The record gives the reactivity of an RNA of 177 nucleotides to 2A3 and DMS.
Conditions: 150 mM KOAc, 10 mM MgCl2 and 150 mM bicine (pH 8.5), 24 C.
Source: RMDB library OK1LIB, as collected in RNAgym.
DMS adducts were read by reverse transcription with MarathonRT.
The 2A3 profile rests on 6,768 reads.
RNA sequence: GGGAACGACUCGAGUAGAGUCGAAAACUCCAGUUUGGGAAGUGACCGGUGCAUCAUUUUCUAAAUCUAUGUCUCAUACGGCGGAUGGUAUAUCUAUUCGUUUUCCCAGAUUUACGAGAAUACGUGACCACCGAAGUAAUUUCGAUUACUUCGGUGGAAAAGAAACAACAACAACAAC
Reactivity to 2A3 in 0.01 (KOAc 150mM, MgCl2 10mM, bicine 150mM(pH8.5), 24C), signal-to-noise 8, nucleotides 027 to 126: c030u030c020c010a050g010u030u060u040g030g000g010a060a060g020u020g050a040c050c070g050g060u100g020c040a050u020c000a010u030u050u040u030c030u070a060a050a040u040c040u090a090u150g090u030c030u020c080a110u120a120c060g020g000c010g020g020a050u030g030g030u070a150u040a020u270c010u020a040u020u030c020g030u060u020u030u010c000c010c010a020g030a110u070u090u110a060c080g020a030g070a150a070u140a140c090g030u050g010a030
Reactivity to DMS in 0.01 (KOAc 150mM, MgCl2 10mM, bicine 150mM(pH8.5), 24C), signal-to-noise 2, nucleotides 027 to 126: c060u010c010c070a070g000u000u000u020g030g010g020a040a020g030u010g000a050c130c080g050g000u030g030c050a290u010c030a020u010u000u000u000c000u000a020a050a020u020c050u000a040u000g000u020c000u000c040a060u040a100c130g010g000c000g000g000a030u000g030g030u020a080u080a070u010c020u010a060u000u020c000g000u000u000u000u000c000c010c020a150g010a080u030u000u000a020c090g000a090g000a080a110u010a060c160g000u000g010a160